[RMDB]
RNA sequence: GGGAACGACUCGAGUAGAGUCGAAAACUUUCAGAAGGCCAAUGGUCAGGAGCCGACCGGCGAAGUGAACCAGAAGCUGGUUCAACUCCUGCUCGAAAAGAACAAAUAAGCCAUUUUGCGUACAGGAAUAUUACGAGCUAUUCGUAGCUCGUAAUAUAAAAGAAACAACAACAACAAC
Reactivity to DMS in 0.01 (KOAc 150mM, MgCl2 10mM, bicine 150mM(pH8.5), 24C), signal-to-noise 5, nucleotides 027 to 126: c050u000u000u000c070a080g010a150a090g000g020c010c190a070a100u010g020g000u000c030a030g010g010a090g020c080c280g010a040c040c010g000g010c010g000a170a140g010u010g010a080a190c140c040a050g000a140a280g010c020u000g010g000u000u000c070a060a120c020u010c010c010u000g010c070u000c030g000a050a060a060a070g000a050a100c130a050a070a060u000a080a110g000c030c030a080u000u000u010u000g020c090g020u010a070c110a080g000g000a120
Reactivity to 2A3 in 0.01 (KOAc 150mM, MgCl2 10mM, bicine 150mM(pH8.5), 24C), signal-to-noise 3, nucleotides 027 to 126: c010u040u200u100c060a110g030a230a050g120g000c010c020a050a080u070g000g000u050c000a000g020g010a010g010c040c060g030a020c010c010g000g000c010g020a070a030g040u060g110a070a040c040c010a030g040a080a030g030c020u010g000g000u040u040c030a030a040c000u000c010c010u020g000c040u010c010g040a070a120a050a040g030a080a010c020a030a110a060u160a120a000g000c010c010a060u090u050u060u110g050c060g020u020a060c020a050g140g010a080
Background: The record gives the reactivity of an RNA of 177 nucleotides to DMS and 2A3. For 2A3 the reverse transcriptase was SuperScript II with manganese. For DMS the reverse transcriptase was MarathonRT.